[RMDB]
RNA sequence: GGGAACGACUCGAGUAGAGUCGAAAACUUGCGACUUACAUGUAGGGCGAGGGGUGGGCGAAAGUUGCCAUGAGACCGUAACUUUCGUAGUCAUUGAUAAAGGGGCAGGUCUCGCUCUUUUGUCAUUUUAAUCUCUAACAGUUCGCUGUUAGAGAAACAUUAUAAAUGUGUUCGCACAUUUAUAAUGAAAAGAAACAACAACAACAAC
Reactivity to DMS in 0.01 (KOAc 150mM, MgCl2 10mM, bicine 150mM(pH8.5), 24C), signal-to-noise 2, nucleotides 027 to 156: c070u000u000g020c020g040a130c080u000u010a080c070a080u000g010u000a080g000g000g030c070g030a070g020g010g020g000u020g000g010g000c010g000a010a030a060g000u000u010g000c000c010a100u010g030a100g000a060c020c040g050u000a010a020c030u000u000u010c030g050u000a090g010u000c060a090u000u000g010a040u010a020a020a090g000g010g010g020c040a060g030g020u000c040u000c030g020c040u000c010u030u010u000u000g010u060c010a240u020u000u000u000a090a140u000c000u010c000u000a010a020c000a020g030u000u010c300g020c010u000g030u000u000a010g000a020g010a020a010a110
Reactivity to 2A3 in 0.01 (KOAc 150mM, MgCl2 10mM, bicine 150mM(pH8.5), 24C), signal-to-noise 7, nucleotides 027 to 156: c050u050u120g020c050g030a040c030u110u180a080c150a130u250g020u070a040g010g010g030c090g050a110g020g030g020g060u250g020g010g000c010g000a000a000a000g010u020u000g010c030c030a100u130g060a020g010a080c030c010g010u000a000a000c000u010u020u000c020g010u010a040g060u050c060a080u010u170g030a040u090a080a050a010g010g000g010g010c040a030g000g080u020c020u000c040g010c010u040c000u040u080u040u050g040u030c010a020u020u030u050u170a090a090u010c000u000c000u000a000a000c000a010g020u050u080c140g070c110u000g000u000u000a000g000a000g000a000a000a000
About this RNA: This 207-nucleotide RNA was probed chemically with DMS and 2A3. The data come from the RNA Mapping Database (RMDB), library M2RFPK. The RNA was probed in 150 mM KOAc, 10 mM MgCl2 and 150 mM bicine (pH 8.5) at 24 C.